[RMDB]
RNA sequence: GGGAACGACUCGAGUAGAGUCGAAAAAUAAAGAGCGUCGCACACACUCAGACUAAGUCUGACACUGACAGACGCUAAACCGCUCUGUCAGUGUGCGAGAUAUCGGUAUUAAAUAGAGCGGAAAAAACCAUGAAACUUUGUUCGCAAAGUUUCAUGGAAAAGAAACAACAACAACAAC
Reactivity to DMS in 0.01 (KOAc 150mM, MgCl2 10mM, bicine 150mM(pH8.5), 24C), signal-to-noise 2, nucleotides 027 to 126: a070u010a070a130a080g000a090g000c110g000u000c010g020c010a030c050a080c100a110c260u000c020a030g000a040c020u010a110a100g020u000c000u000g000a060c140a060c120u010g010a010c000a000g010a010c110g030c040u000a020a060a180c230c030g020c070u000c000u010g030u000c000a010g030u000g000u000g010c080g000a030g030a140u010a040u000c030g000g010u010a050u010u010a080a090a070u000a060g030a090g000c070g000g010a000a040a060a060a090a110
Reactivity to 2A3 in 0.01 (KOAc 150mM, MgCl2 10mM, bicine 150mM(pH8.5), 24C), signal-to-noise 1, nucleotides 027 to 126: a000u130a010a010a000g030a010g060c110g090u050c010g000c000a010c000a020c000a020c020u020c010a040g010a010c090u200a280a030g010u000c000u000g000a010c000a000c040u020g010a010c000a010g000a010c050g000c030u020a060a030a040c070c020g000c040u010c010u000g000u000c010a060g010u000g000u000g030c000g000a000g020a020u110a030u060c020g000g000u010a080u060u130a070a090a060u090a020g060a050g000c070g070g000a050a100a010a000a020a000